[RMDB]
The record gives the reactivity of an RNA of 177 nucleotides to 2A3 and DMS. It was measured as part of the RMDB library OK2TST. 2A3 adducts were read by reverse transcription with SuperScript II with manganese. In probing experiments dimethyl sulfate is read out at A N1 and C N3, which are open when not base-paired. Conditions: 150 mM KOAc, 10 mM MgCl2 and 150 mM bicine (pH 8.5), 24 C. For 2A3, 3,153 sequencing reads were counted.

RNA sequence: GGGAACGACUCGAGUAGAGUCGAAAACUCCAGACGCCCCGGGGAGCCCCGAGGCCCUGGAACUGCGGCGCUCGGCGAGUCGAUCCGGGAUCGAUAGCAGCUCCAUGUCUCCGGCCUCUGAGGCCCCGGAGUAAUACUGAUUCGUCAGUAUUACUCCAAAAGAAACAACAACAACAAC
Reactivity to 2A3 in 0.01 (KOAc 150mM, MgCl2 10mM, bicine 150mM(pH8.5), 24C), signal-to-noise 2, nucleotides 027 to 126: c010u000c010c000a050g030a230c060g080c020c020c010c040g020g000g000g100a160g180c110c020c030c010g020a010g020g000c010c000c020u040g020g000a030a010c010u120g020c040g050g010c020g020c050u030c040g120g000c030g010a040g100u040c020g010a010u020c010c020g060g070g010a070u090c020g030a030u050a060g040c020a020g010c020u000c000c020a020u060g030u030c050u010c070c020g020g000c000c010u080c090u080g070a100g030g050c020c010c000c060
Reactivity to DMS in 0.01 (KOAc 150mM, MgCl2 10mM, bicine 150mM(pH8.5), 24C), signal-to-noise 2, nucleotides 027 to 126: c070u010c010c020a110g020a220c300g040c080c030c020c050g030g000g010g010a200g030c100c010c030c090g000a030g010g010c010c020c030u010g000g000a050a060c080u000g010c030g000g000c040g020c070u000c080g020g020c050g010a110g010u010c040g000a070u000c010c050g010g000g000a050u000c010g000a050u000a110g000c000a030g010c030u010c010c020a060u000g000u000c040u000c080c090g010g010c010c010u000c070u000g000a110g020g020c020c020c070c110